The record gives the reactivity of an RNA of 177 nucleotides to DMS and 2A3.
For 2A3 the reverse transcriptase was SuperScript II with manganese.
RNA sequence: GGGAACGACUCGAGUAGAGUCGAAAAGAAAGAAAGAACUCGUUCGCUCAGCUUUCGACAUGAUUCUGAACAAUCCGCAAGCCCAUGUUGUUGAGAUCAUUAGUUGAAAGCCGAAUGAUCAGAGAAAACACAGAGACAUAUUCGUAUGUCUCUGUGUAAAAGAAACAACAACAACAAC
Reactivity to DMS in 0.01 (KOAc 150mM, MgCl2 10mM, bicine 150mM(pH8.5), 24C), signal-to-noise 4, nucleotides 027 to 126: g010a130a110a120g010a100a090a140g010a090a160c010u000c000g010u000u000c010g010c050u000c010a050g000c000u000u000u000c000g000a010c010a050u000g020a020u020u010c010u010g000a010a030c030a030a030u010c120c090g000c140a100a130g000c090c040c030a070u010g000u000u000g000u000u000g000a040g000a050u010c000a020u010u030a080g020u010u010g010a010a010a010g020c020c010g020a020a010u000g000a010u010c030a110g030a020g000a090a060a080
Reactivity to 2A3 in 0.01 (KOAc 150mM, MgCl2 10mM, bicine 150mM(pH8.5), 24C), signal-to-noise 8, nucleotides 027 to 126: g080a010a060a010g110a030a090a010g060a050a040c010u000c020g020u030u010c010g000c010u020c020a010g000c000u010u010u010c010g010a000c000a010u040g010a050u260u050c000u030g020a010a000c000a010a020u090c110c090g040c130a120a090g030c010c030c030a060u130g000u000u010g000u010u010g140a010g000a010u000c000a000u070u160a050g020u000u020g010a020a000a000g000c000c000g010a000a010u020g010a000u040c120a030g020a000g010a040a090a020